This 177-nucleotide RNA was probed chemically with DMS and 2A3. For 2A3 the reverse transcriptase was SuperScript II with manganese.
[RMDB]
RNA sequence: GGGAACGACUCGAGUAGAGUCGAAAAGAAAGUCUAAACGGAUCCUGUGAGGCCGCCGUGAGGAUCGGGUAAGACGAACAGUCGAAUGCUGCCAGCCCAUUGGGUGAACAGAAGGGGGCUUACUCCGUUCAAACUUGGUAUUCGUACCAAGUUUGAAAAAAGAAACAACAACAACAAC
Reactivity to DMS in 0.01 (KOAc 150mM, MgCl2 10mM, bicine 150mM(pH8.5), 24C), signal-to-noise 5, nucleotides 027 to 126: g020a080a080a120g000u000c010u000a060a130a120c050g000g000a050u010c020c020u000g030u010g000a090g010g020c010c050g000c020c040g000u010g010a090g000g020a040u000c030g010g020g010u010a110a050g000a040c010g000a110a130c160a100g010u000c040g010a120a100u030g020c020u010g010c020c020a260g020c020c010c010a160u010u010g010g010g000u000g000a100a210c100a030g000a060a080g000g030g000g000g020c040u000u020a050c050u010c020c030g040
Reactivity to 2A3 in 0.01 (KOAc 150mM, MgCl2 10mM, bicine 150mM(pH8.5), 24C), signal-to-noise 3, nucleotides 027 to 126: g060a020a060a000g040u030c040u120a080a130a070c050g060g010a050u030c030c030u070g030u060g080a080g030g020c020c030g000c010c020g040u050g070a020g000g010a040u020c010g020g010g000u050a030a050g020a010c020g000a090a040c010a030g040u050c010g060a040a010u100g040c020u010g000c010c000a020g000c000c000c000a060u040u200g060g010g000u080g060a050a000c000a010g050a030a080g030g010g000g000g000c010u000u020a040c030u000c000c000g030